[RMDB]
RNA sequence: GGGAACGACUCGAGUAGAGUCGAAAAGCUUCCUCUUGGCGCGGAGGUUUAACUGCGCUCGCUCCCCAUAUCGGUGUGGGCGCACCGGAUUUACAAAUUAAAGUCGUUUAGGGAGCGGAAAGGGACAAAAACUUGCACGUGUUCGCACGUGCAAGAAUCACAAUUCUCAGUUCGCUGAGAAUUGUGAAAAAGAAACAACAACAACAAC
Reactivity to DMS in 0.01 (KOAc 150mM, MgCl2 10mM, bicine 150mM(pH8.5), 24C), signal-to-noise 1, nucleotides 027 to 156: g030c110u000u020c010c020u000c020u000u000g040g030c020g050c010g050g020a200g060g030u010u010u000a070a130c030u000g000c000g050c000u000c010g000c000u000c010c000c000c010a120u000a060u010c000g000g010u000g020u010g000g000g040c140g030c000a030c020c010g000g000a250u000u010u000a300c130a040a070a210u000u010a020a050a050g030u000c030g050u020u010u000a010g000g000g030a060g030c020g020g000a030a050a060g010g040g000a090c000a130a080a070a110a090c000u010u000g020c000a000c010g010u020g000u000u010c300g040c020a020c000g000u000g000c000a000a000g000a020a170
Reactivity to 2A3 in 0.01 (KOAc 150mM, MgCl2 10mM, bicine 150mM(pH8.5), 24C), signal-to-noise 2, nucleotides 027 to 156: g040c060u220u140c000c000u000c000u010u030g010g000c000g000c000g020g000a000g040g020u070u130u120a030a050c020u010g000c000g000c000u000c010g000c000u020c020c000c000c050a060u090a050u230c000g000g000u000g000u010g080g020g050c000g010c030a000c010c000g010g000a030u250u200u130a060c140a010a040a070u170u130a050a090a010g010u030c030g030u080u040u070a040g000g000g010a000g000c000g000g030a020a030a040g040g010g030a070c120a060a180a040a040a070c010u000u000g020c000a000c000g010u030g030u050u100c170g020c050a000c000g000u000g000c000a000a000g000a000a000
An RNA of 207 nucleotides, treated with DMS and 2A3 and read out base by base. The data come from the RNA Mapping Database (RMDB), library M2RFPK. High DMS reactivity at an A or C suggests that its Watson-Crick edge is free. For DMS the reverse transcriptase was MarathonRT. For 2A3 the reverse transcriptase was SuperScript II with manganese.